The record gives the reactivity of an RNA of 177 nucleotides to DMS and 2A3. 2A3 adducts were read by reverse transcription with SuperScript II with manganese. The data come from the RNA Mapping Database (RMDB), library M2PK90.
RNA sequence: GGGAACGACUCGAGUAGAGUCGAAAAGACAAUAGCGUAGGGAACCAAGCAAAGAGGUAAGAAAUCCCACGGUAGAAGGCUUGGUUCUAGCCGUGGGAAGAAGAAGUCCCACUCGCUACGCCGAUAACACAAUAAAACCUUUCGAGGUUUUAUUGUGAAAAGAAACAACAACAACAAC
Reactivity to DMS in 0.01 (KOAc 150mM, MgCl2 10mM, bicine 150mM(pH8.5), 24C), signal-to-noise 4, nucleotides 027 to 126: g020a130c140a080a080u000a100g010c000g020u000a030g020g010g000a020a050c010c010a030a020g010c010a150a120a140g010a090g010g000u000a070a070g000a080a090a080u010c000c000c000a050c030g000g020u000a080g010a070a070g020g010c020u000u000g000g020u000u000c010u000a040g020c030c050g020u000g000g000g010a030a050g020a090a050g010a070a130g010u000c000c000c000a110c060u000c050g010c000u000a000c020g030c000c090g000a080u010a070a120
Reactivity to 2A3 in 0.01 (KOAc 150mM, MgCl2 10mM, bicine 150mM(pH8.5), 24C), signal-to-noise 1, nucleotides 027 to 126: g120a020c050a050a230u070a110g000c020g000u010a010g010g040g000a000a020c010c000a010a000g030c000a020a210a140g150a080g090g050u170a150a040g060a120a130a060u050c000c000c010a000c000g010g030u090a100g040a180a010g060g000c020u030u020g000g000u000u010c000u010a020g020c000c020g000u020g000g010g010a000a010g020a000a000g020a010a000g010u030c000c010c000a020c000u020c000g010c020u000a010c010g000c030c010g020a020u090a120a010